[RMDB]
RNA sequence: GGGAACGACUCGAGUAGAGUCGAAAACUCACUAACUUCGGUUAGUGAGAAAUAAAUUCAGCGGUUUAAUUUUCGAGGGCAUAACCGCUGAUGCCCUCGAAAAAAGCAUUCCCUUCGGGGAAUGCAACAGUGUUUACAUCUUCGGAUGUAAACACUGAAAAGAAACAACAACAACAAC
Reactivity to 2A3 in 0.01 (KOAc 150mM, MgCl2 10mM, bicine 150mM(pH8.5), 24C), signal-to-noise 1, nucleotides 027 to 126: c000u020c010a000c000u000a010a020c010u020u050c190g080g000u020u000a010g000u010g000a000g000a000a010a000u040a010a010a020u130u080c040a000g030c050g060g130u050u100u300a110a100u030u130u020u050c010g010a010g010g010g020c000a010u030a050a070c020c030g000c040u000g000a000u030g000c000c030c010u000c000g030a010a000a000a010a000a000g000c010a000u000u010c010c000c000u010u030c250g050g000g020g000a000a000u000g000c010a000a000
Reactivity to DMS in 0.01 (KOAc 150mM, MgCl2 10mM, bicine 150mM(pH8.5), 24C), signal-to-noise 1, nucleotides 027 to 126: c000u000c000a010c000u000a000a010c000u000u010c160g030g000u000u010a000g010u010g010a010g000a030a030a060u010a040a060a110u010u000c040a020g020c030g000g030u000u010u000a090a100u000u000u010u000c000g010a030g000g010g010c010a030u000a070a050c020c030g000c020u000g010a020u000g020c000c000c020u000c010g000a010a010a010a050a080a100g000c000a020u000u000c000c000c000u000u000c190g010g000g000g000a000a000u000g020c020a050a030